This 207-nucleotide RNA was probed chemically with 2A3 and DMS.
For DMS the reverse transcriptase was MarathonRT.
RNA sequence: GGGAACGACUCGAGUAGAGUCGAAAAGCUCUGUAAUGGGAUGGGAUCCGAAGCCCCAUUGAGGGAUAAUACAGGCUCUCCCAUCCAACUCCUAUUCCGACACGUCCUCGUCGUACAGAGUGGUAACUAAGGUAUAGCUCCUUCGGGAGCUAUACAACCAGACAAUAUCGUUCGCGAUAUUGUCUGGAAAAGAAACAACAACAACAAC
Reactivity to 2A3 in 0.01 (KOAc 150mM, MgCl2 10mM, bicine 150mM(pH8.5), 24C), signal-to-noise 2, nucleotides 027 to 156: g010c020u040c010u090g030u040a130a070u120g160g010g020a000u000g010g010g000a030u200c000c010g060a050a030g030c010c000c030c060a190u130u200g060a300g020g000g000a030u130a220a080u180a200c130a070g000g020c000u000c000u000c010c000c000a000u000c010c010a000a000c010u060c020c010u060a070u080u070c000c000g030a030c010a020c180g180u130c030c010u040c060g040u020c000g000u040a010c000a000g010a000g000u040g000g040u120a130a070c090u090a010a090g090g000u000a000u000a000g000c000u000c010c000u020u080c090g070g000g000a000g150c000u000a010u000a000c030a000a010
Reactivity to DMS in 0.01 (KOAc 150mM, MgCl2 10mM, bicine 150mM(pH8.5), 24C), signal-to-noise 1, nucleotides 027 to 156: g000c010u010c020u000g000u000a080a270u010g060g010g000a030u000g010g040g000a110u000c030c020g030a150a190g020c010c000c020c030a300u000u010g010a110g000g030g000a080u020a070a160u000a120c080a190g000g040c070u000c070u010c000c000c000a070u000c050c000a040a000c010u000c010c030u000a300u030u030c030c060g000a150c050a140c070g000u000c000c020u010c050g000u040c040g020u000a060c050a010g000a030g040u020g000g010u010a070a080c100u000a040a160g020g000u000a040u000a010g000c000u000c000c000u000u020c300g070g010g050a010g000c020u000a000u000a010c030a080a100
The reactions ran in a buffer of 150 mM KOAc, 10 mM MgCl2 and 150 mM bicine (pH 8.5), at 24 C.
The data come from the RNA Mapping Database (RMDB), library M2RFPK.
DMS (dimethyl sulfate) methylates the pairing face of unpaired adenines and cytosines.